[RMDB]
RNA sequence: GGGAACGACUCGAGUAGAGUCGAAAAGCACCCAGCUCUGUGUCGACUCACACGGAAUCGUCGGGUCUUAUGUGUUUGGAUAAGACUUGACUAAACUUAACAAACUCGCUUAAUGUGAUCCCUGCUGGCCGGGCAGCAUUAAGUUAAAAUAAUAGACCCAUCUAACUCGCUUCGGCGAGUUAGAUGGAAAAGAAACAACAACAACAAC
Reactivity to 2A3 in 0.01 (KOAc 150mM, MgCl2 10mM, bicine 150mM(pH8.5), 24C), signal-to-noise 1, nucleotides 027 to 156: g030c040a070c000c000c000a020g010c070u030c000u000g000u010g000u050c040g160a170c020u100c190a020c000a020c000g100g030a010a170u090c080g000u000c000g010g000g000u000c000u000u000a010u000g050u010g050u020u030u020g010g000a000u020a030a000g010a000c080u000u040g010a000c000u040a060a130a060c090u110u270a090a000c010a000a000a000c000u020c050g000c000u000u000a000a000u000g050u020g100a300u190c020c000c010u060g020c020u090g180g040c050c020g050g000g000c050a020g060c000a000u000u000a030a000g000u000u020a000a010a000a030u300a010a090u090a120g080a060c040
This 207-nucleotide RNA was probed chemically with 2A3. The data come from the RNA Mapping Database (RMDB), library RSTRND. Conditions: 150 mM KOAc, 10 mM MgCl2 and 150 mM bicine (pH 8.5), 24 C. For 2A3, 514 sequencing reads were counted. 2A3 adducts were read by reverse transcription with SuperScript II with manganese.